[RMDB]
RNA sequence: GGGAACGACUCGAGUAGAGUCGAAAAGAUAUGGACGAUAACAGCGUUGAAACCAGGCAUCGGAAACGAUGCUGGUGGAGCUGAGUCGUCCUAAGUCAAAACCUCAUAGAGUUCGCUCUAUGAGGAAGAGCAGUACAACGUUCGCGUUGUACUGCUCAAAAGAAACAACAACAACAAC
Reactivity to 2A3 in 0.01 (KOAc 150mM, MgCl2 10mM, bicine 150mM(pH8.5), 24C), signal-to-noise 2, nucleotides 027 to 126: g000a000u010a000u060g000g010a000c020g000a000u130a300a270c110a020g030c000g260u300u300g170a010a000a000c020c000a060g190g100c020a010u000c000g020g000a000a000a010c010g000a000u000g050c000u000g000g040u000g000g050a060g000c000u000g010a020g070u000c020g010u000c000c000u000a000a000g000u000c000a020a040a040a230c000c010u000c010a000u000a000g040a000g040u130u120c290g070c070u000c010u000a000u000g020a000g010g000a040a020
Reactivity to DMS in 0.01 (KOAc 150mM, MgCl2 10mM, bicine 150mM(pH8.5), 24C), signal-to-noise 1, nucleotides 027 to 126: g000a030u000a060u010g000g000a020c000g010a040u000a130a260c030a070g050c060g000u010u000g000a180a300a000c000c000a030g010g030c000a000u000c010g050g000a060a020a000c000g030a000u000g040c000u020g000g000u000g000g040a030g020c000u000g000a300g040u000c000g030u010c000c010u000a020a030g000u000c010a080a090a050a220c000c000u010c010a000u000a010g010a000g020u000u000c260g060c000u010c000u030a010u000g020a000g000g010a010a030